Overview: The record gives the reactivity of an RNA of 207 nucleotides to 2A3. The RNA was probed in 150 mM KOAc, 10 mM MgCl2 and 150 mM bicine (pH 8.5) at 24 C. 2A3 adducts were read by reverse transcription with SuperScript II with manganese.
RNA sequence: GGGAACGACUCGAGUAGAGUCGAAAAAUUACGAGAAAUAGCUAUAAAGCUCAGGAGGGAUAGCGCCAUGGCUCACCAGUGCUGUAUGUUUUGUAUAUGCGUACAUGUAUAUCUGUUGGCGCUAUCCAUCCUGAGUUCCAUAGCUUCUUCUUUGAAACAACUGACUCCAGUUCGCUGGAGUCAGUUGAAAAGAAACAACAACAACAAC
Reactivity to 2A3 in 0.01 (KOAc 150mM, MgCl2 10mM, bicine 150mM(pH8.5), 24C), signal-to-noise 1, nucleotides 027 to 156: a020u130u120a030c050g000a000g020a000a000a040u080a010g000c000u000a000u040a130a220a010g010c000u000c000a000g000g000a000g000g000g000a000u000a000g000c000g000c000c000a040u010g060g000c080u050c070a040c030c000a010g040u000g040c000u050g000u000a040u010g070u010u030u110u120g300u090a160u030a030u240g010c000g000u010a000c000a040u270g040u040a060u020a040u260c010u000g140u050u020g050g030c000g010c010u000a000u000c000c000a010u000c000c000u000g000a000g000u000u000c000c000a000u020a020g000c000u010u000c020u010u010c000u010u060u050g200a180a090a000